Chemical mapping of a 207-nucleotide RNA with 2A3. For 2A3 the reverse transcriptase was SuperScript II with manganese. The reactions ran in a buffer of 150 mM KOAc, 10 mM MgCl2 and 150 mM bicine (pH 8.5), at 24 C.

RNA sequence: GGGAACGACUCGAGUAGAGUCGAAAAGAAAGAAAGAAAGAACUCUCUAAAGUGAGGGAUUGCCUGGACCAGGUCGGCGGGCCUGCUCCAGUUUCCUUCGCUCUGCUCAACGGGCAGACCGCCACAAAAAACGCGUGGCUGUUCGCAGCCACGCGAAGAAUGUGUUCUAGUUCGCUAGAACACAUUCAAAAGAAACAACAACAACAAC
Reactivity to 2A3 in 0.01 (KOAc 150mM, MgCl2 10mM, bicine 150mM(pH8.5), 24C), signal-to-noise 3, nucleotides 027 to 156: g050a000a040a010g060a040a080a010g080a070a100a020g060a080a030c010u040c010u020c020u120a150a110a100g110u050g010a000g000g040g010a050u070u250g050c000c000u000g000g000a000c000c010a000g010g000u020c070g020g040c020g000g010g000c000c000u000g020c010u000c010c000a010g010u000u050u020c000c000u050u020c030g010c040u010c000u010g000c010u010c070a130a070c110g020g020g000c000a010g030a070c010c030g020c010c000a070c040a030a210a040a040a030a020c020g000c000g010u000g010g000c020u010g020u070u140c200g010c060a000g020c000c000a020c010g000c000g000a000a000